Structure probing data (2A3 and DMS) for a 207-nucleotide construct.
RNA sequence: GGGAACGACUCGAGUAGAGUCGAAAAUACCGUCUUCUCCCCGACGGUUUCAAUCCAUAGCUUCACGUUGUGUAGCGUAGGUGGAAGGUAUCGUGUGGUGUAUGAACACCACAUAGUCUCUUAGGGGUCAAGCUGAUAAACUUCGGUUUAUCAGCAAUAUACUAUGGGAGUUCGCUCCCAUAGUAUAAAAAGAAACAACAACAACAAC
Reactivity to 2A3 in 0.01 (KOAc 150mM, MgCl2 10mM, bicine 150mM(pH8.5), 24C), signal-to-noise 6, nucleotides 027 to 156: u060a000c000c000g020u020c030u220u050c050u090c020c000c000c000g000a000c000g000g000u010u040u050c040a040a040u040c010c010a040u040a110g000c010u060u080c020a040c070g300u300u260g020u100g040u070a030g010c030g070u090a080g010g130u030g030g050a040a030g090g020u110a040u170c070g010u000g000u010g010g010u000g020u020a170u270g180a120a020c000a000c000c000a000c000a000u000a000g020u000c010u020c010u110u210a020g000g020g000g000u050c050a060a070g020c000u000g000a000u000a000a010a000c010u040u070c180g060g010u010u000u000a000u000c000a000g000c000a000a000
Reactivity to DMS in 0.01 (KOAc 150mM, MgCl2 10mM, bicine 150mM(pH8.5), 24C), signal-to-noise 4, nucleotides 027 to 156: u000a070c010c020g000u000c010u000u000c040u000c020c010c010c040g010a050c020g020g000u010u000u000c070a120a130u010c010c020a100u000a190g000c020u000u000c040a050c040g010u010u010g000u010g040u010a040g020c020g040u010a070g030g040u000g000g010a070a100g030g030u010a070u010c080g030u000g030u010g010g050u000g040u000a140u010g000a200a140c000a010c000c000a010c000a020u000a020g000u000c050u000c030u000u000a190g020g000g010g020u010c040a070a190g010c000u000g030a030u000a010a010a010c010u000u010c300g030g010u000u000u000a010u000c000a000g000c010a010a010
The data come from the RNA Mapping Database (RMDB), library M2RFPK.
The reactions ran in a buffer of 150 mM KOAc, 10 mM MgCl2 and 150 mM bicine (pH 8.5), at 24 C.
High 2A3 reactivity points to a flexible backbone, as in loops and unpaired stretches.